[RMDB]
RNA sequence: GGGAACGACUCGAGUAGAGUCGAAAAACUAUCCGAAGCGGGGAUAGCGCUGGAUAAAAUCAUGCUGCUGUAUCCGGAUGAGCACAACUCGGCAUUAAAUUUGGCCAAGAAAGCCUUGAGUGCCGGCUCUAGAUUCAAUCUUCGGAUUGAAUCUAGAAAAAGAAACAACAACAACAAC
Reactivity to 2A3 in 0.01 (KOAc 150mM, MgCl2 10mM, bicine 150mM(pH8.5), 24C), signal-to-noise 3, nucleotides 027 to 126: a030c020u040a040u000c000c000g060a070a000g060c030g000g000g040g070a030u030a040g000c010g000c020u030g050g000a070u070a160a160a060a040u120c050a030u170g020c080u110g000c000u020g030u040a080u050c010c000g000g090a150u110g080a030g040c040a020c010a090a160c010u040c020g000g000c010a020u000u160a060a200a120u150u120u100g000g010c000c020a040a040g080a140a090a010g040c000c000u020u020g050a010g030u010g000c030c010g060g020c010
Reactivity to DMS in 0.01 (KOAc 150mM, MgCl2 10mM, bicine 150mM(pH8.5), 24C), signal-to-noise 3, nucleotides 027 to 126: a130c040u010a030u010c010c010g000a080a070g020c080g000g000g000g000a060u000a040g020c040g020c030u000g000g000a050u010a060a090a070a300u020c050a020u000g030c030u000g040c010u000g000u010a050u000c020c010g020g000a110u010g000a080g020c060a050c100a070a060c120u000c000g010g020c000a030u000u000a050a090a230u000u010u000g010g020c010c020a080a120g000a090a160a150g000c020c010u010u000g000a070g010u000g010c030c010g020g010c280

Annotation
The record gives the reactivity of an RNA of 177 nucleotides to 2A3 and DMS. Values are in units of 0.01, from 0 to 300, in steps of 10. The reactions ran in a buffer of 150 mM KOAc, 10 mM MgCl2 and 150 mM bicine (pH 8.5), at 24 C. It was measured as part of the RMDB library OK2TRN. Reactivities are given for positions 27 through 126. For 2A3, 2,518 sequencing reads were counted.